[RMDB]
RNA sequence: GGGAACGACUCGAGUAGAGUCGAAAACGCGACGCGCACGAUGCCCUUCACCGGCCCGAACGAUUCCUCCGCGUAGAGGCGCAUCGCGGGCGUCACGCGGUCGACGAGCGUCGCGGGCAUCAGCGUACACGACGUGACCUUUCGAGGUCACGUCGUGAAAAGAAACAACAACAACAAC
Reactivity to 2A3 in 0.01 (KOAc 150mM, MgCl2 10mM, bicine 150mM(pH8.5), 24C), signal-to-noise 1, nucleotides 027 to 126: c020g030c010g100a030c100g000c020g000c020a030c140g020a020u010g010c030c000c000u100u170c050a030c060c060g050g000c000c030c030g160a300a180c020g000a090u160u000c000c020u020c000c000g070c070g060u040a100g030a120g140g030c070g000c030a020u040c060g040c030g040g040g000c000g000u040c020a020c040g000c030g000g000u040c020g010a080c000g050a040g030c020g010u030c060g000c080g060g050g030c040a100u000c060a020g000c000g000u020a020
Reactivity to DMS in 0.01 (KOAc 150mM, MgCl2 10mM, bicine 150mM(pH8.5), 24C), signal-to-noise 1, nucleotides 027 to 126: c000g000c080g010a030c000g030c000g020c090a130c150g020a000u000g000c000c000c010u010u000c050a110c170c030g000g000c030c040c000g030a050a190c100g000a150u010u000c000c000u000c000c000g030c140g040u000a150g010a040g030g040c270g020c030a080u000c010g010c080g020g060g000c000g020u000c060a010c060g020c100g000g000u000c080g010a030c040g000a170g010c120g010u010c020g060c150g000g000g070c030a050u000c110a030g000c050g030u000a260